Background: The data come from the RNA Mapping Database (RMDB), library OK3TST. An RNA of 207 nucleotides, treated with DMS and 2A3 and read out base by base.

[RMDB]
RNA sequence: GGGAACGACUCGAGUAGAGUCGAAAAUAUGACCACACCACUGUACUCCAGCCUGGGCAACAAAGCAAGACCCUGUCUCGAAUAUAAUAAAGUAAAAAUAUACAAGCAAUACUAACUAUGGUUUACGACUACACAUAUAUGAAAUACAUAAAUACAAUAAAUACUCAUCAUUCGUGAUGAGUAUUUAAAAAGAAACAACAACAACAAC
Reactivity to DMS in 0.01 (KOAc 150mM, MgCl2 10mM, bicine 150mM(pH8.5), 24C), signal-to-noise 2, nucleotides 027 to 156: u000a090u000g000a140c000c020a020c040a120c010c010a170c010u000g020u010a040c050u010c010c030a080g000c000c010u000g000g010g020c010a060a120c040a070a070a090g000c010a120a140g000a070c040c010c020u000g010u000c020u020c010g000a140a140u010a040u000a050a160u020a050a090a130g010u000a000a060a090a120a110u040a120u000a050c020a040a140g000c010a050a100u010a060c060u020a070a060c050u000a070u050g020g000u000u010u000a050c110g000a160c040u000a080c030a020c060a050u000a070u010a070u010g010a060a030a130u000a100c030a100u000a020a060a130u000a050c020a040a140
Reactivity to 2A3 in 0.01 (KOAc 150mM, MgCl2 10mM, bicine 150mM(pH8.5), 24C), signal-to-noise 2, nucleotides 027 to 156: u210a090u060g050a030c030c000a010c010a010c020c010a070c050u090g000u120a050c010u020c010c010a040g030c000c000u000g000g000g000c010a050a000c000a020a120a000g010c010a060a060g010a050c000c020c000u040g060u030c000u050c000g040a090a020u100a010u060a170a070u070a060a080a020g020u070a090a020a020a070a050u300a110u080a130c030a050a000g030c010a040a070u020a100c000u050a150a000c020u050a040u090g040g020u000u080u040a010c030g000a010c000u190a020c060a000c030a020u080a000u020a010u170g020a000a100a030u110a050c030a000u200a120a130a130u290a050c010a020a010
For DMS the reverse transcriptase was MarathonRT. 2A3 adducts were read by reverse transcription with SuperScript II with manganese. The 2A3 profile rests on 1,168 reads. High DMS reactivity at an A or C suggests that its Watson-Crick edge is free.